[RMDB]
An RNA of 207 nucleotides, treated with DMS and 2A3 and read out base by base. Source: RMDB library OK3TST, as collected in RNAgym. Values cover nucleotides 27 to 156. The reactions ran in a buffer of 150 mM KOAc, 10 mM MgCl2 and 150 mM bicine (pH 8.5), at 24 C. For DMS the reverse transcriptase was MarathonRT.

RNA sequence: GGGAACGACUCGAGUAGAGUCGAAAAAAGGUGGUGAUUCACAACACGGACGAGCGUCAGCCAUUCAUCAUCCGCCCAGGCUACCGGAUCGCGCAGCUGAUUCUCGAGAAUUUCACCAUCGUCCACGUGAAUGAGGUUCCGACCGAGUGUACGGAUAGAUGGCAGAGGGAUUCGUCCCUCUGCCAUCAAAAGAAACAACAACAACAAC
Reactivity to DMS in 0.01 (KOAc 150mM, MgCl2 10mM, bicine 150mM(pH8.5), 24C), signal-to-noise 1, nucleotides 027 to 156: a110a100g010g030u010g000g030u000g020a090u010u020c120a230c160a180a140c090a160c160g010g060a110c020g010a060g020c120g050u000c010a050g010c000c000a220u000u000c000a060u010c040a010u000c010c010g030c020c050c120a300g010g020c030u000a050c020c000g000g000a070u000c050g050c100g040c250a090g000c010u010g020a050u000u000c000u020c050g020a150g020a050a130u000u000u020c050a020c000c000a000u040c010g010u000c000c060a110c180g000u000g000a130a070u000g030a090g030g000u020u000c000c070g000a160c060c010g010a190g010u000g000u000a130c000g020g000a080u000a190
Reactivity to 2A3 in 0.01 (KOAc 150mM, MgCl2 10mM, bicine 150mM(pH8.5), 24C), signal-to-noise 2, nucleotides 027 to 156: a000a000g030g000u000g000g010u000g000a020u080u100c030a050c040a220a110c120a170c170g180g020a060c000g000a000g000c010g020u000c010a000g000c000c000a090u150u080c020a060u080c000a020u000c020c010g130c010c040c030a040g140g020c050u120a030c060c000g010g000a010u030c030g000c020g000c120a010g000c020u030g010a000u030u000c000u000c000g080a090g030a030a070u010u050u050c010a000c000c000a000u020c000g020u000c000c000a050c070g090u120g110a060a170u070g000a020g110g000u110u020c050c040g090a100c000c020g020a140g030u150g020u070a040c000g010g000a020u080a140